The record gives the reactivity of an RNA of 177 nucleotides to DMS and 2A3. High 2A3 reactivity points to a flexible backbone, as in loops and unpaired stretches. It was measured as part of the RMDB libraries RFM100 and RFMREP. For 2A3 the reverse transcriptase was SuperScript II with manganese. The reactions ran in a buffer of 150 mM KOAc, 10 mM MgCl2 and 150 mM bicine (pH 8.5), at 24 C. DMS (dimethyl sulfate) methylates the pairing face of unpaired adenines and cytosines.

[RMDB]
RNA sequence: GGGAACGACUCGAGUAGAGUCGAAAAUUUUGGACCAAACUCGUUGAAAACCAAUGCUUUUGCUGCCCUUGGAUUUCGGGGGAUGGUAGUUGUGGAUUUCUAGGGAAGAGAACCAAAGGUCGGGACCAUUUUGGCUGAAAUUCGUUUCAGCCAAAAUAAAAGAAACAACAACAACAAC
Reactivity to DMS in 0.01 (KOAc 150mM, MgCl2 10mM, bicine 150mM(pH8.5), 24C), signal-to-noise 4, nucleotides 027 to 126: u010u020u020u060g000g020a080c030c040a040a120a160c040u000c010g000u040u020g010a020a020a030a060c020c010a070a040u020g000c050u000u020u020u010g020c060u000g000c020c040c070u020u000g000g010a150u000u020u020c050g020g000g000g000g000a130u010g010g000u000a020g010u000u010g010u020g010g000a080u000u000u000c020u020a100g000g000g000a070a070g010a110g010a060a080c030c030a020a080a070g010g030u000c030g000g000g000a200c030c050
Reactivity to 2A3 in 0.01 (KOAc 150mM, MgCl2 10mM, bicine 150mM(pH8.5), 24C), signal-to-noise 4, nucleotides 027 to 126: u140u100u050u180g060g020a030c030c000a050a000a000c020u010c030g190u100u150g040a050a040a000a000c010c000a040a030u120g040c030u090u160u160u190g040c040u060g020c000c020c000u010u010g060g010a100u130u070u070c040g020g010g030g000g030a030u030g030g000u040a060g040u000u090g040u080g100g010a090u030u060u000c010u030a050g020g050g020a110a080g020a040g010a090a050c020c020a080a010a000g050g010u040c000g010g010g030a030c000c000